[RMDB]
RNA sequence: GGGAACGACUCGAGUAGAGUCGAAAAUCCUAAGUCGAACAGACAAUUACUUGGAUUUAUCUCUGGAGUCACGUCGGAAACGACGUGACGAUGAAAGAGAUUGUCAGUAAUUGCUGUUCGAUAUGGAAAAAGCCCUACGUGUUCGCACGUAGGGCAACUUAGGCAUGGAGUUCGCUCCAUGCCUAAGAAAAGAAACAACAACAACAAC
Reactivity to 2A3 in 0.01 (KOAc 150mM, MgCl2 10mM, bicine 150mM(pH8.5), 24C), signal-to-noise 2, nucleotides 027 to 156: u020c010c010u030a080a030g010u000c000g010a000a000c000a000g300a110c000a020a000u010u000a000c030u050u140g240g010a030u260u300u140a080u040c000u000c010u000g070g010a020g000u000c000a000c000g020u010c010g010g060a110a080a090c010g010a000c020g010u000g000a000c030g010a110u000g020a000a000a000g010a000g000a000u000u010g020u000c010a000g000u000a010a000u000u010g000c000u000g010u000u010c000g000a000u000a010u080g010g040a030a000a010a200a070g010c000c000c000u000a000c000g020u020g030u090u100c280g000c170a020c000g020u010a000g000g000g010c000a020a000